[RMDB]
RNA sequence: GGGAACGACUCGAGUAGAGUCGAAAAGAUAUGGAACGAAUUAUAUUGUCAGAAUAACUGUCGGAAACGACAGAGUUCUUGGAUUUAUAUAACUAUUCCUAAGUCAAAAGAUCCGUUCGCGGAUCAAUCCAUAGUACACCUUCGGGUGUACUAUGGAAAAAGAAACAACAACAACAAC
Reactivity to 2A3 in 0.01 (KOAc 150mM, MgCl2 10mM, bicine 150mM(pH8.5), 24C), signal-to-noise 2, nucleotides 027 to 126: g040a020u140a060u130g000g000a020a010c060g020a280a300u050u000a010u010a000u000u090g040u010c010a010g100a060a020u260a250a160c030u010g010u000c010g020g060a140a060a120c010g000a000c010a000g000a020g010u030u000c020u070u170g190g000a040u220u300u000a040u010a000u020a030a000c000u000a060u080u000c000c010u010a190a070g030u050c040a100a000a050a170g010a010u000c010c010g020u040u040c260g000c020g110g010a020u010c000a000a030
Reactivity to DMS in 0.01 (KOAc 150mM, MgCl2 10mM, bicine 150mM(pH8.5), 24C), signal-to-noise 2, nucleotides 027 to 126: g000a070u010a300u010g010g000a010a030c070g030a040a120u000u000a030u000a000u000u000g000u010c000a010g000a050a010u010a160a110c000u000g000u000c000g000g000a070a030a090c000g010a000c000a020g000a300g000u000u000c000u010u010g000g000a000u000u000u010a010u000a030u010a010a030c080u010a300u000u000c010c000u000a040a280g030u010c040a050a060a170a110g000a010u010c000c010g030u000u010c300g030c010g020g010a000u000c000a050a050
Overview: Structure probing data (2A3 and DMS) for a 177-nucleotide construct. Reactivities are given for positions 27 through 126. For DMS, 903 sequencing reads were counted. 2A3 adducts were read by reverse transcription with SuperScript II with manganese.